[RMDB]
An RNA of 207 nucleotides, treated with 2A3 and DMS and read out base by base. For 2A3, 1,988 sequencing reads were counted. Reactivities are given for positions 27 through 156. It was measured as part of the RMDB library RNAMAK. For 2A3 the reverse transcriptase was SuperScript II with manganese.
RNA sequence: GGGAACGACUCGAGUAGAGUCGAAAAGCGUACUACGAAAGCUUGGAUUUAUGGGUAAAACAGCGAUAAGUAGGCUCCCAAAUAGGAGCCUACUUUUGACGCUGUCAACCCAUUGUCAGCUUUCGUAUCGCAAAAGGCGAAGCUUCGGCUUCGCCAACAAGGAACUUACGUUCGCGUAAGUUCCUUGAAAAGAAACAACAACAACAAC
Reactivity to 2A3 in 0.01 (KOAc 150mM, MgCl2 10mM, bicine 150mM(pH8.5), 24C), signal-to-noise 2, nucleotides 027 to 156: g030c000g020u130a100c060u000a010c010g010a000a010a000g000c050u110u200g070g000a030u130u290u080a010u040g030g000g030u060a150a160a010a000c000a000g020c010g020a090u000a100a000g000u000a000g000g010c010u000c000c060c000a170a240a060u300a040g000g000a000g000c010c000u000a000c010u000u000u020u000g000a000c000g000c000u000g010u000c010a010a000c010c000c000a000u000u000g010u030c000a000g000c000u010u000u040c000g000u020a000u030c010g000c030a050a030a080a130g000g000c020g010a000a000g010c000u080u120c260g030g000c010u000u000c010g060c000c000a000a000
Reactivity to DMS in 0.01 (KOAc 150mM, MgCl2 10mM, bicine 150mM(pH8.5), 24C), signal-to-noise 2, nucleotides 027 to 156: g020c000g050u010a050c110u000a040c010g020a010a040a030g000c010u010u010g080g030a090u010u000u000a010u000g000g020g020u000a010a090a060a010c000a030g070c000g000a250u000a010a000g030u000a000g010g020c000u010c030c000c030a030a130a300u020a030g010g010a000g010c010c000u000a010c000u000u000u000u010g020a250c030g040c000u000g000u000c010a150a300c000c010c000a050u000u010g000u000c000a050g000c010u000u000u000c000g010u000a000u000c010g000c030a130a070a080a110g070g030c020g000a030a000g030c000u000u010c300g100g000c000u010u010c000g020c000c000a000a020